[RMDB]
RNA sequence: GGGAACGACUCGAGUAGAGUCGAAAAGAUAUGGACUAUUCAGGACAUGGUUGUCAUCGGAAACGAUGACACCCAACAGCCUGAUAGUCCUAAGUCAAACAUGUAACAUGUUCGCAUGUUACAUGAACUGUCCCUCUCUGUUCGCAGAGAGGGACAGAAAAGAAACAACAACAACAAC
Reactivity to DMS in 0.01 (KOAc 150mM, MgCl2 10mM, bicine 150mM(pH8.5), 24C), signal-to-noise 1, nucleotides 027 to 126: g020a000u000a010u010g030g000a010c000u000a000u020u020c020a000g040g000a040c100a100u030g030g000u000u000g000u010c000a000u000c000g020g000a010a000a040c010g020a030u000g000a010c000a000c020c000c020a160a080c180a210g000c000c020u000g000a010u000a000g010u000c000c000u000a000a030g000u000c000a170a150a210c010a010u000g000u000a020a020c000a030u000g000u000u020c190g020c000a000u010g000u010u000a000c000a000u000g000a010a080
Reactivity to 2A3 in 0.01 (KOAc 150mM, MgCl2 10mM, bicine 150mM(pH8.5), 24C), signal-to-noise 2, nucleotides 027 to 126: g000a000u010a010u020g000g000a020c000u000a000u300u210c150a010g040g000a030c180a300u300g010g000u010u000g000u020c000a020u010c000g020g000a010a000a010c000g000a000u000g000a000c000a000c020c000c010a220a090c050a010g010c000c000u000g000a000u000a000g000u000c000c000u000a000a000g000u000c030a080a080a090c000a020u000g020u010a010a000c000a010u010g070u050u110c300g010c090a010u010g000u020u010a000c000a000u010g000a060a040
About this RNA:
Structure probing data (DMS and 2A3) for a 177-nucleotide construct. The 2A3 profile rests on 3,396 reads. For DMS, 1,367 sequencing reads were counted. Conditions: 150 mM KOAc, 10 mM MgCl2 and 150 mM bicine (pH 8.5), 24 C. For DMS the reverse transcriptase was MarathonRT.